[RMDB]
Annotation: This 177-nucleotide RNA was probed chemically with DMS and 2A3. Reactivities are given for positions 27 through 126. The data come from the RNA Mapping Database (RMDB), library OK2TST. The 2A3 profile rests on 1,726 reads.
RNA sequence: GGGAACGACUCGAGUAGAGUCGAAAACAAAAAUAGUCGUCAAUGAGUCUCGACAUCACAUUCCUCACUAUAUUAUUGUAAAUUCGGGUGGCAUUCGAGGUGGUCUAAAUUCAGGUGCCUUUGGCUAUCAUGCUCCAUGAUUCGUCAUGGAGCAUGAAAAAGAAACAACAACAACAAC
Reactivity to DMS in 0.01 (KOAc 150mM, MgCl2 10mM, bicine 150mM(pH8.5), 24C), signal-to-noise 3, nucleotides 027 to 126: c050a010a100a060a110a130u020a090g020u000c060g000u000c060a080a100u010g000a110g000u000c030u000c060g020a070c050a070u010c060a040c120a110u010u000c020c020u010c070a070c110u000a080u010a090u000u000a100u010u010g000u010a040a080a190u000u010c090g020g020g030u000g010g000c080a040u010u000c060g000a060g010g040u000g010g020u000c030u010a050a060a070u000u000c090a050g000g020u010g000c040c030u010u000u020g000g020c050u000a130
Reactivity to 2A3 in 0.01 (KOAc 150mM, MgCl2 10mM, bicine 150mM(pH8.5), 24C), signal-to-noise 2, nucleotides 027 to 126: c010a000a100a020a000a000u110a080g030u030c040g010u000c020a040a170u160g010a020g060u000c030u000c080g040a030c010a040u060c000a050c010a080u060u040c020c000u060c020a040c070u070a120u040a080u300u080a120u100u150g110u110a090a120a050u120u100c000g000g030g000u010g020g010c040a020u040u070c050g000a010g000g090u010g010g020u000c020u040a040a050a050u130u080c040a020g000g090u050g030c000c000u100u050u080g020g020c000u010a020